[RMDB]
RNA sequence: GGGAACGACUCGAGUAGAGUCGAAAAGCUUGUCUACGUAUGGGUAUUUAUAAGUAAAUGGAGAGUUGUAAUGACGAGAAGUUUACAAAGUAAUAUCUGUUCCCGUAUGGGAAUUUUUUCAAGUCCCGUAUUCUACAAGGUUCGCCUUGUAGAAUACAAAAGAAACAACAACAACAAC
Reactivity to DMS in 0.01 (KOAc 150mM, MgCl2 10mM, bicine 150mM(pH8.5), 24C), signal-to-noise 2, nucleotides 027 to 126: g020c050u000u000g010u000c010u000a050c220g000u000a100u000g020g020g020u000a010u000u000u000a010u000a050a300g000u000a010a010a010u010g000g010a260g010a200g010u000u000g010u000a120a070u000g010a000c010g000a080g020a240a240g000u000u000u000a000c010a010a090a190g030u000a020a030u000a010u000c020u000g000u000u000c050c050c030g000u010a050u010g020g010g000a040a010u000u000u010u000u000u000c070a020a050g010u000c000c020c030
Reactivity to 2A3 in 0.01 (KOAc 150mM, MgCl2 10mM, bicine 150mM(pH8.5), 24C), signal-to-noise 2, nucleotides 027 to 126: g000c000u050u010g030u080c010u040a070c080g150u150a120u280g030g000g000u020a030u040u130u040a170u010a170a080g010u040a030a000a010u040g020g010a080g030a050g130u020u010g030u060a190a090u210g010a010c000g010a010g030a260a010g010u020u010u000a000c000a010a170a000g000u030a010a000u000a010u120c010u030g020u020u020c010c020c000g040u130a160u140g020g000g060a030a020u130u060u000u000u000u090c010a000a050g020u030c020c010c000
The data come from the RNA Mapping Database (RMDB), library RFMREP. This 177-nucleotide RNA was probed chemically with DMS and 2A3. The RNA was probed in 150 mM KOAc, 10 mM MgCl2 and 150 mM bicine (pH 8.5) at 24 C. For DMS, 1,485 sequencing reads were counted. For DMS the reverse transcriptase was MarathonRT.